[RMDB]
RNA sequence: GGGAACGACUCGAGUAGAGUCGAAAAAACAAGUUCGCUUGUUACAUUGGGAUCUUUGGCCGAGCGGUUUAAGGCGCUCGACUCAAGAUCGAGUAUCGUAAGAUGCAUGAGUUCGAAUCUCAUAGGAUCCACCACAACCAUACGUUUCGACGUAUAAUUACGCUAUACUGUUCGCAGUAUAGCGUAAAAAAGAAACAACAACAACAAC
Reactivity to DMS in 0.01 (KOAc 150mM, MgCl2 10mM, bicine 150mM(pH8.5), 24C), signal-to-noise 2, nucleotides 027 to 156: a070a050c020a040a060g010u000u000c130g010c020u000u000g020u010u000a090c070a140u000u000g020g030g010a050u000c030u000u020u000g040g000c020c000g000a040g000c020g030g010u000u000u020a130a160g000g030c010g000c000u000c000g000a000c010u000c300a070a010g020a010u000c020g020a120g000u000a040u000c070g010u020a110a180g020a030u000g040c060a070u010g010a100g040u000u000c060g000a210a080u000c000u010c080a120u000a200g020g000a060u010c030c050a130c040c010a090c050a070a080c000c030a070u000a020c030g010u000u000u010c090g010a020c020g020u000a050u000a080a200
Reactivity to 2A3 in 0.01 (KOAc 150mM, MgCl2 10mM, bicine 150mM(pH8.5), 24C), signal-to-noise 3, nucleotides 027 to 156: a010a000c040a040a020g030u110u110c190g070c140u010u040g020u050u060a080c080a180u100u160g120g000g010a010u020c010u020u000u060g020g000c010c010g000a010g010c020g130g000u090u200u240a100a030g170g000c000g000c000u000c010g010a000c000u010c060a010a020g000a040u020c000g000a010g010u070a040u090c050g000u090a080a050g000a010u040g010c030a020u030g020a000g000u050u050c080g000a050a060u010c010u000c000a000u010a060g090g030a030u040c020c020a050c060c030a080c080a070a060c070c050a070u020a070c020g040u050u070u050c090g050a010c000g000u010a020u060a020a080